[RMDB]
RNA sequence: GGGAACGACUCGAGUAGAGUCGAAAAGUUUCAGAAUAAUGUGCCUAAUUAUCAGCACAUUGGAAUGAAGCGCUAUUGUACUGUACAGGGACCGCCUGGUACUGGUAAGUCCCAUCUAGCCAUUGGGAAGAACACUGUAGUUCGCUACAGUGUUCUUAAAAGAAACAACAACAACAAC
Reactivity to 2A3 in 0.01 (KOAc 150mM, MgCl2 10mM, bicine 150mM(pH8.5), 24C), signal-to-noise 3, nucleotides 027 to 126: g000u010u010u000c020a030g040a050a000u030a030a020u010g000u010g000c010c010u130a200a170u230u250a130u250c120a010g000c000a000c000a000u000u000g020g000a060a040u020g010a000a000g000c020g030c060u080a090u060u150g080u070a010c010u020g020u040a020c000a050g090g050g300a300c070c050g100c130c000u040g080g000u000a000c000u060g000g050u040a070a020g020u010c000c000c000a010u010c040u030a040g030c030c030a120u040u080g060g000g020
Reactivity to DMS in 0.01 (KOAc 150mM, MgCl2 10mM, bicine 150mM(pH8.5), 24C), signal-to-noise 6, nucleotides 027 to 126: g010u000u000u010c000a010g010a110a290u010a010a000u010g020u000g000c000c050u010a120a150u020u010a120u010c290a140g010c000a010c000a010u000u000g000g000a300a190u000g000a020a010g010c030g010c140u010a100u000u000g010u000a020c020u000g020u000a060c030a050g010g000g010a180c230c230g010c010c010u000g010g020u010a010c020u000g020g010u000a060a080g000u010c000c000c020a070u000c080u010a070g010c050c120a150u000u010g010g010g010
Chemical mapping of a 177-nucleotide RNA with 2A3 and DMS.
2A3 adducts were read by reverse transcription with SuperScript II with manganese.
DMS (dimethyl sulfate) methylates the pairing face of unpaired adenines and cytosines.
For 2A3, 2,500 sequencing reads were counted.
The data come from the RNA Mapping Database (RMDB), library OK2TRN.